[RMDB]
RNA sequence: GGGAACGACUCGAGUAGAGUCGAAAAGAUAUGGAUAUGGUAGACAUGAUAUGUCGGAAACGAUUUAUCAACAGCUACGCAUAUCCUAAGUCAAAGGCGUACAACGCGUUCGCGCGUUGUACGCCAAGUAUCCCAUUAAGUUCGCUUAAUGGGAUACAAAAGAAACAACAACAACAAC
Reactivity to 2A3 in 0.01 (KOAc 150mM, MgCl2 10mM, bicine 150mM(pH8.5), 24C), signal-to-noise 3, nucleotides 027 to 126: g010a000u010a010u070g000g000a000u010a000u000g010g010u000a010g080a240c100a150u030g010a000u010a000u020g000u000c000g000g000a010a020a000c000g000a000u030u000u010a010u010c010a020a200c080a190g090c010u010a010c060g100c260a010u010a000u000c000c000u000a020a000g010u000c020a050a100a170g000g000c010g000u020a020c000a020a000c020g040c010g050u070u120c300g010c000g020c000g110u000u000g010u020a000c060g010c010c000a000a000
Reactivity to DMS in 0.01 (KOAc 150mM, MgCl2 10mM, bicine 150mM(pH8.5), 24C), signal-to-noise 3, nucleotides 027 to 126: g010a030u000a180u000g000g000a010u000a010u000g000g020u010a000g020a160c100a190u000g010a010u000a000u010g000u000c000g000g000a050a030a110c000g000a010u000u000u000a000u000c000a020a090c300a160g000c000u000a000c010g010c000a010u000a010u000c000c010u000a020a090g000u000c010a080a110a100g010g020c000g000u010a000c000a010a000c000g010c010g030u000u020c210g010c020g020c000g000u000u000g010u010a000c000g000c020c000a010a010
Description
Chemical mapping of a 177-nucleotide RNA with 2A3 and DMS. Source: RMDB library TTRDEL, as collected in RNAgym. Reactivities are given for positions 27 through 126. The RNA was probed in 150 mM KOAc, 10 mM MgCl2 and 150 mM bicine (pH 8.5) at 24 C.